The record gives the reactivity of an RNA of 177 nucleotides to 2A3 and DMS.
RNA sequence: GGGAACGACUCGAGUAGAGUCGAAAAUGUACUGCCAUGGUGUAUUUAUCUACGGUACUGUAGCAAGUGUCUUUUUGCAUGAACAUUGGUCUGCCCGACAUGACGGGUGUCAUCUAGCUUAUGUCACCUAUCUGGGAUGAUUCGUCAUCCCAGAUAGAAAAGAAACAACAACAACAAC
Reactivity to 2A3 in 0.01 (KOAc 150mM, MgCl2 10mM, bicine 150mM(pH8.5), 24C), signal-to-noise 6, nucleotides 027 to 126: u080g010u020a020c020u020g030c070c030a100u090g040g000u050g030u070a170u100u240u060a120u020c040u030a020c040g050g030u050a050c040u090g040u080a020g040c050a100a060g040u030g090u100c000u050u110u040u080u080g050c050a060u060g050a100a020c040a090u030u080g070g000u030c040u060g010c010c010c010g030a050c070a140u150g050a040c040g060g000g010u020g030u030c000a010u020c030u050a020g040c020u080u070a040u080g050u050c010a030c040
Reactivity to DMS in 0.01 (KOAc 150mM, MgCl2 10mM, bicine 150mM(pH8.5), 24C), signal-to-noise 7, nucleotides 027 to 126: u000g010u000a050c050u000g000c060c060a080u000g010g020u000g020u010a060u010u000u000a070u020c070u000a080c070g010g000u010a050c060u000g020u000a060g010c110a060a070g010u000g010u010c010u000u010u010u000u000g000c060a070u000g000a060a050c060a110u000u000g010g010u000c050u010g020c020c040c030g000a100c140a070u010g010a080c080g000g000g020u000g000u000c050a020u000c050u010a120g010c100u000u000a040u000g010u000c050a070c140

Description: Conditions: 150 mM KOAc, 10 mM MgCl2 and 150 mM bicine (pH 8.5), 24 C. For DMS, 12,618 sequencing reads were counted. For 2A3 the reverse transcriptase was SuperScript II with manganese.